The data come from the RNA Mapping Database (RMDB), library RFMREP.
The record gives the reactivity of an RNA of 177 nucleotides to DMS and 2A3.
2A3 adducts were read by reverse transcription with SuperScript II with manganese.
The 2A3 profile rests on 1,968 reads.
For DMS the reverse transcriptase was MarathonRT.
The DMS profile rests on 1,624 reads.

[RMDB]
RNA sequence: GGGAACGACUCGAGUAGAGUCGAAAACGGUGCCCGGCGUGCUAACCAUGCGUCUGCGGCCAAGGCCGAGCUCCGAGCGGCGUUAGCGCCCUCUGCGAAGCGCCCUGCGAUGCCCCAGCCACUGUGAGUACAUCAAUCAGUUCGCUGAUUGAUGUACAAAAGAAACAACAACAACAAC
Reactivity to DMS in 0.01 (KOAc 150mM, MgCl2 10mM, bicine 150mM(pH8.5), 24C), signal-to-noise 2, nucleotides 027 to 126: c070g000g020u000g000c020c050c020g010g010c060g000u030g000c050u000a060a140c190c100a130u020g000c030g020u000c030u010g030c110g020g030c040c080a080a080g000g010c010c030g000a150g020c010u000c030c070g000a070g030c140g020g020c040g010u010u010a160g030c050g000c070c050c030u000c070u000g000c020g000a090a230g010c070g000c020c020c020u000g010c090g010a110u010g020c020c010c000c010a050g000c050c020a090c080u010g040u010g010a240
Reactivity to 2A3 in 0.01 (KOAc 150mM, MgCl2 10mM, bicine 150mM(pH8.5), 24C), signal-to-noise 1, nucleotides 027 to 126: c040g060g000u060g060c050c000c040g020g010c030g050u050g000c040u000a130a000c030c020a100u150g000c040g050u070c060u090g000c040g050g000c020c000a040a040g130g030c030c020g020a030g030c020u020c050c030g020a020g010c080g020g000c000g040u100u110a070g020c000g020c050c050c000u040c040u060g020c000g020a020a000g000c000g010c030c000c000u000g060c060g050a100u070g000c000c000c000c020a000g000c040c000a090c060u110g010u000g170a020